RNA sequence: GGGAACGACUCGAGUAGAGUCGAAAAUGGGAUGGGGUACCUCACGAUGAAAAUGAGAGCGAGUCUUAUAAUUUGCAGAACGUGUGUCGUGUUCGUCCAUCGAGAUCUCAGAGAGGUAUUCGACGGGGACUAACACACAAUUCGUUGUGUGUUAGUCAAAAGAAACAACAACAACAAC
Reactivity to DMS in 0.01 (KOAc 150mM, MgCl2 10mM, bicine 150mM(pH8.5), 24C), signal-to-noise 8, nucleotides 027 to 126: u020g010g000g000a130u010g010g000g000g010u010a020c030c010u000c000a150c080g010a090u020g000a060a050a070a070u010g000a080g000a080g010c050g000a070g010u020c100u000u030a110u040a100a080u020u010u020g010c070a080g000a070a050c060g000u010g020u020g010u010c070g000u000g010u000u010c040g000u020c050c050a140u010c070g000a080g010a060u000c010u000c020a100g010a190g010a010g000g010u000a030u020u010c050g010a060c090g000g000g000
Reactivity to 2A3 in 0.01 (KOAc 150mM, MgCl2 10mM, bicine 150mM(pH8.5), 24C), signal-to-noise 9, nucleotides 027 to 126: u130g030g020g040a060u110g030g010g000g030u040a030c000c010u010c010a030c050g080a070u150g100a040a050a050a070u120g020a030g000a010g060c040g020a040g060u030c020u050u180a170u040a180a200u130u140u190g060c070a030g020a140a020c030g040u070g010u030g050u130c050g010u020g040u090u040c020g020u020c030c000a030u050c030g010a040g010a090u020c030u010c070a050g060a000g000a010g120g020u050a150u050u060c030g020a040c040g010g010g050

An RNA of 177 nucleotides, treated with DMS and 2A3 and read out base by base. The data come from the RNA Mapping Database (RMDB), library OK1LIB. For DMS the reverse transcriptase was MarathonRT. For DMS, 26,716 sequencing reads were counted.